[RMDB]
RNA sequence: GGGAACGACUCGAGUAGAGUCGAAAACGUCGCCAGAUGCGGCAUAGGAUUAUGAGCGUUUCCCCUGCGCGUUAUGGUACCCGGACCGGGCCCGCGACACACGGUGCACAGGUAGAGCUAGUUAGGCACGGAUGGAACGGUUCGCCGUUCCAUCCGUAAAAGAAACAACAACAACAAC
Reactivity to DMS in 0.01 (KOAc 150mM, MgCl2 10mM, bicine 150mM(pH8.5), 24C), signal-to-noise 1, nucleotides 027 to 126: c240g000u000c070g020c010c110a100g010a040u000g000c000g040g020c060a110u000a120g000g000a160u010u000a020u000g000a060g000c030g030u000u000u000c020c000c020c070u000g000c050g050c050g000u010u000a060u000g000g000u010a000c060c000c010g030g010a040c000c120g000g010g000c090c010c010g000c130g010a140c130a070c090a090c080g000g010u000g060c040a030c060a070g000g000u020a050g000a160g030c050u000a080g020u000u010a110g010g000c060
Conditions: 150 mM KOAc, 10 mM MgCl2 and 150 mM bicine (pH 8.5), 24 C. Structure probing data (DMS) for a 177-nucleotide construct. It was measured as part of the RMDB library OK2TRN.